[RMDB]
RNA sequence: GGGAACGACUCGAGUAGAGUCGAAAAAGCACGUGGCGUGAGUUGCGAAUUUACCGAUGAUGGUAAAUUUACGAUUCCACAUAUGGAAUACGAAUGUGCUAAUAACCACAGGUUGUAUCUAGUGGAAUCUGUUGAAAUAUUGACAGAUUAUAAAAUCUCAUCCCCUGGUAUUCGUACCAGGGGAUGAAAAAGAAACAACAACAACAAC
Reactivity to 2A3 in 0.01 (KOAc 150mM, MgCl2 10mM, bicine 150mM(pH8.5), 24C), signal-to-noise 2, nucleotides 027 to 156: a020g050c020a000c050g040u100g050g040c060g010u040g100a060g070u120u100g080c010g020a000a010u000u000u000a030c060c020g130a190u200g050a090u210g110g000u050a000a000a050u030u030u040a040c010g000a010u000u000c090c000a020c010a050u200a120u190g060g010a040a000u050a060c000g010a020a010u000g010u000g000c000u010a090a040u090a040a040c010c030a020c010a000g080g030u010u020g010u010a080u050c010u050a120g020u070g000g020a010a000u000c050u030g000u000u000g040a140a170a160u200a090u080u050g010a000c000a010g010a020u000u060a030u140a070a080a210a150u120c030
Reactivity to DMS in 0.01 (KOAc 150mM, MgCl2 10mM, bicine 150mM(pH8.5), 24C), signal-to-noise 1, nucleotides 027 to 156: a020g010c000a030c020g030u010g010g030c070g020u010g020a070g030u010u010g020c030g030a020a010u000u030u010a000c000c010g000a280u010g020a230u000g010g000u000a010a030a020u000u000u020a030c000g010a020u000u000c000c030a010c070a080u010a090u000g020g000a180a120u020a110c070g030a090a050u000g020u000g000c020u000a070a100u000a130a130c030c000a030c100a120g040g000u010u000g020u000a060u000c060u000a130g020u000g000g000a040a030u010c020u020g010u020u000g010a060a150a200u000a120u000u010g000a020c020a000g010a030u020u000a130u000a100a110a100a180u000c050
Notes: Structure probing data (2A3 and DMS) for a 207-nucleotide construct. 2A3 adducts were read by reverse transcription with SuperScript II with manganese. The data come from the RNA Mapping Database (RMDB), library OK3TST. The reactions ran in a buffer of 150 mM KOAc, 10 mM MgCl2 and 150 mM bicine (pH 8.5), at 24 C. DMS adducts were read by reverse transcription with MarathonRT. Values cover nucleotides 27 to 156.